An RNA of 177 nucleotides, treated with DMS and 2A3 and read out base by base. The data come from the RNA Mapping Database (RMDB), library OK2TRN. Conditions: 150 mM KOAc, 10 mM MgCl2 and 150 mM bicine (pH 8.5), 24 C.

RNA sequence: GGGAACGACUCGAGUAGAGUCGAAAAUUUUGCCGUCAAGGUCGCAUCGGUGAACACCGCGAACCGGCAGGGCAAGCGUAAACGCACCCGGACCGGAUACGGCAAGCGCAAGAGCACCAAGCGCGCCUCCACACCAUAUGUUCGCAUAUGGUGUGGAAAAAGAAACAACAACAACAAC
Reactivity to DMS in 0.01 (KOAc 150mM, MgCl2 10mM, bicine 150mM(pH8.5), 24C), signal-to-noise 4, nucleotides 027 to 126: u000u000u000u000g010c000c000g000u000c100a260a160g010g000u000c020g020c100a120u010c140g000g010u010g000a090a070c120a140c150c040g000c000g010a100a130c020c000g010g000c190a240g000g010g010c070a070a250g020c000g020u010a060a130a130c180g010c010a060c020c000c100g000g010a130c000c000g010g010a200u020a010c010g010g010c040a040a040g000c030g020c010a090a070g010a080g020c090a150c030c030a090a100g000c060g000c010g020c130c070
Reactivity to 2A3 in 0.01 (KOAc 150mM, MgCl2 10mM, bicine 150mM(pH8.5), 24C), signal-to-noise 3, nucleotides 027 to 126: u050u040u020u040g010c020c000g040u050c050a110a060g050g010u030c020g000c100a120u150c100g070g000u060g060a100a040c070a030c070c050g030c010g000a020a050c010c000g050g020c050a060g020g010g040c140a130a060g000c000g050u190a180a130a080c060g000c020a190c010c000c010g060g000a070c010c010g000g020a060u040a100c010g010g010c040a040a040g000c010g020c020a100a040g040a040g100c050a020c080c000a030a020g020c030g000c010g000c030c020